[RMDB]
RNA sequence: GGGAACGACUCGAGUAGAGUCGAAAAGAUAUGGAGUGGCUUUUGACGAUCUGGGUUCGGAAACGAACCUCAGAUCGAUAAGCCAGAUCUCCUAAGUCAAACGUUGUACCCUUCGGGGUACAACGAACUCUUAUGUUGGGUUCGCCCAACAUAAGAGAAAAGAAACAACAACAACAAC
Reactivity to 2A3 in 0.01 (KOAc 150mM, MgCl2 10mM, bicine 150mM(pH8.5), 24C), signal-to-noise 2, nucleotides 027 to 126: g030a000u100a050u190g010g000a010g040u050g000g030c020u090u090u150u180g260a160c100g000a000u000c000u000g000g000g000u000u000c010g020g010a050a050a050c010g010a000a010c010c020u060c000a010g010a000u000c000g000a000u000a000a000g000c000c000a000g040a040u030c000u000c000c000u020a110a030g090u050c070a190a030a100c040g000u020u000g020u000a010c010c010c000u020u060c300g110g010g000g000u000a010c010a000a000c000g010a010a000
Reactivity to DMS in 0.01 (KOAc 150mM, MgCl2 10mM, bicine 150mM(pH8.5), 24C), signal-to-noise 4, nucleotides 027 to 126: g000a030u010a300u000g000g000a010g040u000g010g010c000u000u000u010u000g020a180c160g000a000u000c000u000g010g000g000u000u000c000g010g010a100a070a150c010g000a000a000c000c000u000c020a000g000a010u000c000g010a040u000a000a020g010c000c000a080g000a080u020c000u000c010c000u000a050a140g000u000c020a100a100a260c010g010u000u000g000u000a000c000c000c000u000u010c170g030g000g020g030u000a000c000a000a000c010g010a040a070